[RMDB]
RNA sequence: GGGAACGACUCGAGUAGAGUCGAAAAGGCGAGGGUCCUCAGUUCUCUCUAUUCUUUCUUUUUGAAAGAGGAGACUGCUGGACCAAACGCCCGAACCGGGAUGAGCCGCAUGCCGGGCGGGAGGGACAGGGUUCGAGCUUCGGCUCGAACAAAAGAAACAACAACAACAAC
Reactivity to DMS in 0.01 (KOAc 150mM, MgCl2 10mM, bicine 150mM(pH8.5), 24C), signal-to-noise 2, nucleotides 027 to 129: g010g030c050g020a210g000g000g030u020c000c010u010c020a000g020u070u070c050u000c000u060c080u040a220u000u000c030u000u030u010c020u060u040u070u130u110g020a000a000a000g010a050g000g000a060g020a040c020u060g020c120u000g050g000a000c000c020a020a030a110c040g020c030c020c050g030a120a100c060c020g000g000g000a000u010g000a060g030c000c040g050c110a030u000g050c050c000g010g020g020c090g110g000g020a050g040g010g030a150c120a180g000g010
Reactivity to 2A3 in 0.01 (KOAc 150mM, MgCl2 10mM, bicine 150mM(pH8.5), 24C), signal-to-noise 3, nucleotides 027 to 129: g000g000c020g030a040g000g080g130u000c010c000u020c000a120g000u290u070c010u000c000u000c060u080a180u200u000c020u010u030u000c010u050u260u060u150u300g020a020a010a000g000a000g010g010a020g010a000c000u000g010c060u030g000g000a000c000c020a010a020a000c020g000c000c010c000g030a060a070c000c000g000g030g000a000u060g020a020g010c010c040g040c070a000u060g030c000c030g000g000g080c140g000g020g070a230g010g000g010a030c020a040g030g030

Source: RMDB library 15KLIB, as collected in RNAgym. This 170-nucleotide RNA was probed chemically with DMS and 2A3. The reactions ran in a buffer of 150 mM KOAc, 10 mM MgCl2 and 150 mM bicine (pH 8.5), at 24 C.